Structure probing data (DMS) for a 177-nucleotide construct. Source: RMDB library TTRDES, as collected in RNAgym. Conditions: 150 mM KOAc, 10 mM MgCl2 and 150 mM bicine (pH 8.5), 24 C. For DMS, 1,834 sequencing reads were counted.
RNA sequence: GGGAACGACUCGAGUAGAGUCGAAAAAAAAAGAUAUGGAUUGCGAUGAAAGCGUGUAGUCCGGUAACACGGUCGGAAACGACCGUGCCAGGACGCAGAUACGCUGGAGCAAUCCUAAGUCAAAAAACAAUGAGACUUUGUUCGCAAAGUCUCAUUGAAAAGAAACAACAACAACAAC
Reactivity to DMS in 0.01 (KOAc 150mM, MgCl2 10mM, bicine 150mM(pH8.5), 24C), signal-to-noise 2, nucleotides 027 to 126: a010a010a030a060a020g000a030u040a300u000g010g000a030u000u000g000c010g000a170u000g000a150a050a040g010c000g000u010g000u000a160g000u000c010c010g000g030u010a110a150c010a020c000g000g020u000c000g000g010a090a090a160c000g030a020c000c000g020u000g010c000c040a300g020g000a000c000g010c220a060g000a080u000a020c000g000c000u000g000g020a060g010c000a020a010u000c000c000u010a010a030g000u020c010a020a060a080a130a080a120